[RMDB]
RNA sequence: GGGAACGACUCGAGUAGAGUCGAAAACGGCGUGUUCGCACGCCGAAAAAACCGUAGGUCGUUGUAGGCUUUUGACGAGCUGCACACUUCGAAAGAGGUGUGGAGCUCGAUAAGCCUACACCGACCUAAACGGAAAAAAGGGCGUUUCGACGCCCAAGGAGGUUAAGUGUUUCGACACUUAACCUCCAAAAGAAACAACAACAACAAC
Reactivity to 2A3 in 0.01 (KOAc 150mM, MgCl2 10mM, bicine 150mM(pH8.5), 24C), signal-to-noise 1, nucleotides 027 to 156: c020g000g000c000g000u010g010u040u100c130g030c120a070c070g000c000c000g010a000a000a000a000a000a000c020c000g000u010a010g050g000u000c020g000u010u010g000u000a010g000g040c000u050u120u060u110g260a190c040g000a000g050c020u210g000c000a010c000a000c000u000u050c000g080a090a100a080g010a000g040g010u000g000u030g040g000a010g000c000u000c000g000a000u000a000a000g020c000c010u000a000c000a000c000c000g000a000c000c000u000a000a000a000c000g030g080a000a000a000a000a000a220g010g000g000c000g000u040u100u130c220g070a040c000g000c000c000c000a000a010